[RMDB]
RNA sequence: GGGAACGACUCGAGUAGAGUCGAAAAAGAGUGAGGCGAUGCAGGAAAAUUUGGAAGAACUUAGGAGGAAGAGCUGCGACCAGAGGAACUUGGUGGGGAAUUUCCUGAGAGCAGACUUAAGGCAAGGACCUGACGACGCUGAAUAGAGGGGAAGUAAAUUACUCACCAGUUUCGACUGGUGAGUAAUAAAAGAAACAACAACAACAAC
Reactivity to DMS in 0.01 (KOAc 150mM, MgCl2 10mM, bicine 150mM(pH8.5), 24C), signal-to-noise 1, nucleotides 027 to 156: a050g000a070g030u010g000a080g010g030c060g040a080u000g000c120a090g030g040a070a060a150a060u000u000u000g000g020a100a040g000a040a030c100u010u020a100g040g000a060g000g000a030a100g000a060g030c040u010g030c060g050a180c090c020a120g020a110g030g000a040a030c090u000u010g070g000u000g050g000g050g010a070a000u010u000u000c010c000u030g000a130g020a140g040c040a050g030a120c050u000u000a080a040g040g010c050a090a090g010g000a100c030c000u010g040a090c090g020a170c060g030c070u000g030a090a120u000a080g000a120g020g000g030g050a030a050g000u020a050a020
Reactivity to 2A3 in 0.01 (KOAc 150mM, MgCl2 10mM, bicine 150mM(pH8.5), 24C), signal-to-noise 2, nucleotides 027 to 156: a000g020a020g040u050g000a000g000g020c040g020a000u050g000c040a010g060g060a030a120a070a070u090u100u120g060g010a060a050g020a050a040c050u080u080a060g070g030a010g030g000a020a020g000a020g050c100u060g020c000g050a030c030c010a050g020a030g120g010a000a040c040u070u110g030g010u040g010g000g010g010a010a070u020u080u030c000c000u070g010a060g000a010g080c010a000g010a090c020u060u090a060a010g030g000c060a050a060g020g000a040c030c000u030g010a010c030g000a010c040g000c020u050g020a070a030u060a120g020a030g000g000g000g010a010a030g000u080a050a090
Structure probing data (DMS and 2A3) for a 207-nucleotide construct. The reactions ran in a buffer of 150 mM KOAc, 10 mM MgCl2 and 150 mM bicine (pH 8.5), at 24 C. High 2A3 reactivity points to a flexible backbone, as in loops and unpaired stretches.